[RMDB]
RNA sequence: GGGAACGACUCGAGUAGAGUCGAAAAAGUUGUUACUCUGAUCCUUGUACACUAUGAGCCUGCCAGUGUACCUUUCCAGGUAGCAGGCCAGGAGGGCUAAAGGGCUAGCUUAUGUCCAUGGGUAUAGGGUAGAGUUUGACCUAAAUCAUUAAGAUGGCAUAGCAUAGCAUUUCGAUGCUAUGCUAUGAAAAGAAACAACAACAACAAC
Reactivity to DMS in 0.01 (KOAc 150mM, MgCl2 10mM, bicine 150mM(pH8.5), 24C), signal-to-noise 2, nucleotides 027 to 156: a140g010u010u000g020u000u010a040c010u020c040u010g010a140u010c020c000u010u000g030u000a040c030a110c030u000a090u000g020a120g020c010c020u010g000c000c030a100g000u010g000u000a050c010c020u000u010u020c110c140a110g000g040u000a100g020c100a100g010g000c000c010a060g020g020a100g010g000g000c000u000a070a090a170g010g020g000c060u010a050g000c060u000u000a070u000g010u000c040c000a100u010g010g000g030u000a060u000a050g010g020g010u010a030g010a050g010u010u000u000g010a150c040c000u000a060a070a180u000c060a120u010u010a080a110g040a130u010g020g030
Reactivity to 2A3 in 0.01 (KOAc 150mM, MgCl2 10mM, bicine 150mM(pH8.5), 24C), signal-to-noise 3, nucleotides 027 to 156: a000g030u010u000g010u070u020a020c020u000c020u030g130a160u160c000c000u020u030g010u030a010c220a050c050u030a050u110g050a030g050c010c020u010g010c050c040a150g060u130g100u210a080c000c010u170u300u110c080c090a000g010g000u000a010g010c040a020g030g010c030c000a000g000g020a030g040g030g000c020u090a140a050a040g130g060g050c070u020a010g040c000u110u110a070u220g070u010c020c000a040u040g030g000g000u010a010u010a030g010g000g000u000a010g000a000g030u000u030u120g030a030c020c000u040a080a100a030u100c070a060u050u210a080a060g110a080u070g020g000